[RMDB]
RNA sequence: GGGAACGACUCGAGUAGAGUCGAAAAGGACGUGCCCGGUGUUGGGGCAGCCGCUGCAGGGCUGGAUAGCACUGGAGAGCAACGAGAAGCUGCGGCUGCGCAUCGUGGAGUGGGUGCAGGAGCAGGGCAGUCAAAUGCCGUUCGCGGCAUUUGACUGAAAAGAAACAACAACAACAAC
Reactivity to 2A3 in 0.01 (KOAc 150mM, MgCl2 10mM, bicine 150mM(pH8.5), 24C), signal-to-noise 1, nucleotides 027 to 126: g060g000a040c030g040u050g050c000c000c000g020g060u150g030u030u130g040g070g080g000c020a010g000c010c000g000c050u110g010c010a020g020g030g050c010u040g080g150a190u300a070g030c010a020c020u060g040g090a040g010a020g090c060a080a080c050g050a040g010a110a000g000c020u020g000c000g050g000c000u020g000c010g000c010a080u050c030g040u140g010g010a110g000u110g000g030g040u080g020c010a030g060g010a020g000c000a040g010g020g000
Reactivity to DMS in 0.01 (KOAc 150mM, MgCl2 10mM, bicine 150mM(pH8.5), 24C), signal-to-noise 2, nucleotides 027 to 126: g020g020a120c080g000u000g030c030c010c030g000g030u000g010u020u000g010g000g010g020c010a020g010c010c020g000c000u000g000c030a070g000g000g010c000u010g030g000a210u010a020g000c020a060c060u000g000g000a190g020a080g020c060a070a130c120g020a170g000a120a080g020c030u000g010c030g000g000c060u000g030c020g000c050a070u000c070g030u010g010g010a120g000u000g000g000g040u000g030c060a160g010g000a120g000c050a090g000g000g000